[RMDB]
RNA sequence: GGGAACGACUCGAGUAGAGUCGAAAAAUGCUCCGAAAAACCCGGCGGAUUUUGCGGCGCUGGGACUUGGCCGCACCUUCCAGAUCGUGCAGCCGUUUGCGGCCAUGACGGUCGAGGAAAACAUUAAGUAAUACUCAGUGUUCGCACUGAGUAUUACAAAAGAAACAACAACAACAAC
Reactivity to 2A3 in 0.01 (KOAc 150mM, MgCl2 10mM, bicine 150mM(pH8.5), 24C), signal-to-noise 1, nucleotides 027 to 126: a010u040g000c030u000c050c000g000a060a080a070a110a110c040c020c010g030g000c030g030g090a080u090u070u030u300g140c130g080g030c020g000c010u040g000g000g030a000c010u010u070g000g010c030c010g000c010a080c020c030u050u040c020c000a060g000a080u060c050g050u070g090c000a060g070c020c000g040u070u120u240g120c030g010g000c020c000a030u090g110a010c010g000g020u020c010g010a290g040g000a040a070a020a010c040a020u190u210a160a040
Reactivity to DMS in 0.01 (KOAc 150mM, MgCl2 10mM, bicine 150mM(pH8.5), 24C), signal-to-noise 3, nucleotides 027 to 126: a150u000g000c030u020c020c010g000a050a090a100a110a110c010c030c010g030g020c030g000g000a110u000u010u020u000g010c100g020g000c030g010c020u000g000g010g000a040c060u000u010g000g010c040c090g030c020a040c080c050u010u000c030c060a200g000a030u000c020g010u000g000c100a230g000c020c000g020u010u010u010g020c040g020g000c030c060a110u010g010a030c070g000g020u000c010g020a140g010g000a030a050a090a080c110a090u010u000a060a170
Structure probing data (2A3 and DMS) for a 177-nucleotide construct. For 2A3, 1,434 sequencing reads were counted. It was measured as part of the RMDB library OK2TST. Conditions: 150 mM KOAc, 10 mM MgCl2 and 150 mM bicine (pH 8.5), 24 C. The DMS profile rests on 2,415 reads.